[RMDB]
Notes
This 177-nucleotide RNA was probed chemically with 2A3 and DMS.
RNA sequence: GGGAACGACUCGAGUAGAGUCGAAAAUGAAACAUGGUUACCAUAUGGAUUGGCACAAGGUUGCCAUGAAAAGUGCCAAUCCAUAUAAAGCUGAGCGUUAGGAAAAACCUAAUGCUCAGCAAAAAAAGAUAUGAAGGGAGUUCGCUCCCUUCAUAUCAAAAGAAACAACAACAACAAC
Reactivity to 2A3 in 0.01 (KOAc 150mM, MgCl2 10mM, bicine 150mM(pH8.5), 24C), signal-to-noise 1, nucleotides 027 to 126: u140g020a000a090a010c090a100u150g150g000u130u150a020c020c010a000u000a000u010g010g020a030u000u000g000g000c000a000c020a030a060g190g070u200u150g090c060c000a030u020g060a020a030a000a000g000u000g000c010c000a020a000u010c000c000a020u000a010u000a020a010a000g010c000u000g010a000g020c000g020u000u000a020g000g010a010a090a140a130a120c000c010u000a000a010u000g000c000u010c010a000g000c020a000a000a000a000a000a000a000
Reactivity to DMS in 0.01 (KOAc 150mM, MgCl2 10mM, bicine 150mM(pH8.5), 24C), signal-to-noise 2, nucleotides 027 to 126: u000g000a190a080a090c110a120u010g010g030u000u000a080c060c080a080u000a000u000g000g010a020u010u000g010g010c000a010c000a040a090g020g020u010u010g020c140c120a040u010g000a060a090a110a060g010u000g000c000c000a000a000u000c000c000a000u000a000u010a040a060a120g010c010u000g000a010g000c000g000u000u000a010g000g010a060a130a060a180a180c000c000u000a000a000u000g000c010u000c010a000g000c000a010a000a020a060a060a030a020
The reactions ran in a buffer of 150 mM KOAc, 10 mM MgCl2 and 150 mM bicine (pH 8.5), at 24 C. For 2A3 the reverse transcriptase was SuperScript II with manganese.